[RMDB]
RNA sequence: GGGAACGACUCGAGUAGAGUCGAAAAGAUAUGGAUACCGAACGUCUGCUAGCUUGGAUUUAUACGUAACAUCGCUCGGAAACGAGCGUGGUAUUGUCAGCUAGCAGACCAGUAGGUAUCCUAAGUCCCUAUGAGAAGGGUUCGCCCUUCUCAUAGGAAAAGAAACAACAACAACAAC
Reactivity to 2A3 in 0.01 (KOAc 150mM, MgCl2 10mM, bicine 150mM(pH8.5), 24C), signal-to-noise 2, nucleotides 027 to 126: g040a000u110a020u290g000g000a000u020a010c000c030g000a010a000c010g020u030c010u000g020c010u000a000g010c030u050u300g160g020a030u060u300u040a010u060a040c050g050u120a170a060c090a300u300c030g010c010u000c000g050g000a060a150a080c020g010a010g000c000g000u000g010g010u000a030u000u030g030u020c000a010g000c000u000a000g020c010a010g000a000c000c010a000g000u010a000g000g010u000a010u000c000c000u000a000a000g000u040c010
Reactivity to DMS in 0.01 (KOAc 150mM, MgCl2 10mM, bicine 150mM(pH8.5), 24C), signal-to-noise 2, nucleotides 027 to 126: g010a150u000a260u020g010g000a010u000a020c000c000g000a210a190c300g000u000c000u000g000c010u000a000g020c010u000u020g040g010a020u000u000u000a000u010a010c010g010u000a060a100c200a030u010c000g020c000u000c000g010g000a100a130a220c020g000a000g020c010g090u000g010g010u000a000u000u000g000u000c020a070g000c010u000a000g020c000a000g000a010c000c000a000g000u010a060g000g000u000a000u000c000c000u000a020a100g000u010c070